This 207-nucleotide RNA was probed chemically with DMS.
RNA sequence: GGGAACGACUCGAGUAGAGUCGAAAAAUCGUGAGCCGCCUGUUCUACGGCAAGAGCUACUACCACGUGUACAAGCUCACGCUGUGUCUCAGCUGCCUCAACAACUGUCUGGACCCGUUUGUUUAUUACUUUGCGUCCCGGGAAUUCCAGCUGCGCAGUCGUCAAAAUAGUUCGCUAUUUUGACGACAAAAGAAACAACAACAACAAC
Reactivity to DMS in 0.01 (KOAc 150mM, MgCl2 10mM, bicine 150mM(pH8.5), 24C), signal-to-noise 1, nucleotides 027 to 156: a080u000c020g030u000g000a220g120c000c020g030c000c040u010g020u000u020c020u000a030c000g020g000c020a080a150g010a080g040c000u000a170c070u000a120c000c020a080c220g070u010g000u000a070c070a130a070g010c040u000c010a070c110g000c090u000g000u000g030u010c040u000c030a150g030c010u010g010c040c070u010c080a080a070c030a030a030c010u000g030u000c010u000g010g010a170c000c010c000g060u010u020u000g000u000u000u020a130u030u000a110c060u000u000u000g010c090g050u000c300c060c020g030g020g000a050a190u000u000c040c000a080g010c020u000g010c000g000c020a160
For DMS the reverse transcriptase was MarathonRT. Conditions: 150 mM KOAc, 10 mM MgCl2 and 150 mM bicine (pH 8.5), 24 C.